[RMDB]
RNA sequence: GGGAACGACUCGAGUAGAGUCGAAAAGCUAACGACAAUGCCCGAGAUUUCCUCUCACAUUAUGGGAUCAAAGGAAUGAAAUGGGGCAAGCGCAAAGCCUCAGCCGAUGUGGAAAAGGCUAGCGUGUCUGUCAAUGGCAAGGAUACGGAUGCUGGACGCAUCCAUGCUGUUUCGACAGCAUGGAUGCAAAAGAAACAACAACAACAAC
Reactivity to 2A3 in 0.01 (KOAc 150mM, MgCl2 10mM, bicine 150mM(pH8.5), 24C), signal-to-noise 1, nucleotides 027 to 156: g000c010u070a100a030c070g000a020c000a070a040u050g030c000c020c000g030a000g020a020u020u060u000c030c000u060c010u050c050a100c030a210u130u270a110u300g050g020g000a030u090c110a040a050a050g050g020a000a000u050g010a000a030a120u220g000g000g000g040c010a060a000g000c000g000c010a140a120a000g000c000c000u050c010a010g020c050c030g250a300u200g050u290g170g010a090a160a030a000g010g030c000u000a020g000c000g000u020g050u020c080u090g040u030c020a030a200u120g000g000c010a030a000g170g010a030u080a100c010g020g020a010u030g090c020u040g030g030a020c100